[RMDB]
RNA sequence: GGGAACGACUCGAGUAGAGUCGAAAAGCAAGAUUCACCUGUAAACAAUACGUGUAGAGUAAUUGUUAGUGAUAACUCGUAUCGGAAAAUAGGGAAAGGUUAUAGAAGGAUGGAGUUUCUAUAAAGCACACAUACUUUCCUUCGGGAAAGUAUGUGUAAAAGAAACAACAACAACAAC
Reactivity to DMS in 0.01 (KOAc 150mM, MgCl2 10mM, bicine 150mM(pH8.5), 24C), signal-to-noise 3, nucleotides 027 to 126: g020c090a120a100g000a140u030u010c040a110c050c030u010g010u000a070a070a160c080a080a050u010a030c050g010u000g000u030a150g010a070g020u030a080a040u000u030g020u020u040a140g030u040g010a050u010a040a030c010u000c000g000u000a080u020c030g000g000a050a030a030a050u030a010g000g000g000a010a040a030g000g010u010u000a050u030a040g010a060a090g010g000a090u020g010g010a290g020u000u000u010c000u000a080u020a090a030a170g020c260
Reactivity to 2A3 in 0.01 (KOAc 150mM, MgCl2 10mM, bicine 150mM(pH8.5), 24C), signal-to-noise 3, nucleotides 027 to 126: g020c030a010a010g020a090u070u040c040a040c050c000u050g080u190a070a100a000c040a010a020u110a060c040g020u100g140u120a060g040a080g150u070a100a170u090u080g100u140u060a070g030u060g210a070u110a110a010c000u070c120g110u300a040u050c040g000g090a010a000a010a050u020a030g070g000g000a010a080a010g010g030u050u050a100u030a080g100a030a050g030g020a030u130g010g010a120g000u010u030u000c050u020a100u090a090a040a040g070c040